[RMDB]
RNA sequence: GGGAACGACUCGAGUAGAGUCGAAAACACAUCCCAUCAUAUCGGUUAAGAACUCUUAACUCUGAUGGCUUUCGAGUUAUGUGGUGCAUUGAAGCUCUCCCUUCAAUUCAACGUACCGUUCCGUCAAGUAUCAGCGAAUGUUCGCAUUCGCUGAUACAAAAGAAACAACAACAACAAC
Reactivity to 2A3 in 0.01 (KOAc 150mM, MgCl2 10mM, bicine 150mM(pH8.5), 24C), signal-to-noise 2, nucleotides 027 to 126: c080a010c020a030u090c000c050c000a000u010c000a010u090a040u120c060g050g000u010u030a040a040g080a270a220c090u000c010u230u010a010a000c000u000c060u090g030a030u020g010g050c060u050u130u070c050g040a050g020u100u080a080u150g090u090g050g060u000g050c020a040u000u030g040a010a000g010c020u020c040u070c060c020c000u020u020c020a050a050u060u050c010a040a030c020g000u020a030c000c040g000u000u010c000c020g120u090c020a120a020
Reactivity to DMS in 0.01 (KOAc 150mM, MgCl2 10mM, bicine 150mM(pH8.5), 24C), signal-to-noise 2, nucleotides 027 to 126: c130a150c230a060u010c080c000c000a010u000c050a070u000a080u000c200g010g010u000u000a010a010g000a210a160c300u000c000u010u000a010a010c000u000c050u000g010a050u000g000g020c130u010u020u000c080g000a050g000u000u000a030u000g010u000g020g020u000g000c060a070u000u010g000a040a060g000c100u000c070u000c040c060c010u010u000c060a060a060u010u000c030a000a120c060g010u010a020c050c030g010u000u000c010c000g000u000c030a070a060